RNA sequence: GGGAACGACUCGAGUAGAGUCGAAAAAAAAAGAUAUGGAUCAUGGCAGUACCGAUUGUGGCGUUGAAAGUAGCUCGGAAACGAGCUACUGGAGCCAUAGAGGAACUGCAUGAUCCUAAGUCAAAAAUCUUCAGAUAUUGUUCGCAAUAUCUGAAGAAAAAGAAACAACAACAACAAC
Reactivity to DMS in 0.01 (KOAc 150mM, MgCl2 10mM, bicine 150mM(pH8.5), 24C), signal-to-noise 3, nucleotides 027 to 126: a020a060a070a140a090g020a060u010a300u000g000g000a010u000c010a010u000g010g020c010a020g020u000a100c000c000g010a300u010u020g060u000g010g010c000g000u000u000g000a150a090a010g000u000a000g010c000u000c000g010g000a090a070a180c010g010a010g020c000u000a000c010u000g000g000a030g000c000c000a010u000a010g000a300g010g000a110a000c000u000g010c010a000u000g000a010u000c000c000u000a000a060g020u020c030a040a050a050a120a080
Reactivity to 2A3 in 0.01 (KOAc 150mM, MgCl2 10mM, bicine 150mM(pH8.5), 24C), signal-to-noise 2, nucleotides 027 to 126: a020a020a020a030a000g030a040u070a040u090g000g000a000u000c010a010u060g300g090c010a010g020u120a210c020c010g070a100u130u150g010u000g010g000c040g270u300u010g000a020a010a010g010u010a020g020c000u010c010g010g030a020a030a020c010g000a010g010c010u000a000c000u000g000g000a010g000c000c000a000u000a020g000a040g020g000a060a020c010u000g000c000a000u000g020a000u030c000c000u000a020a000g010u020c040a000a000a000a120a300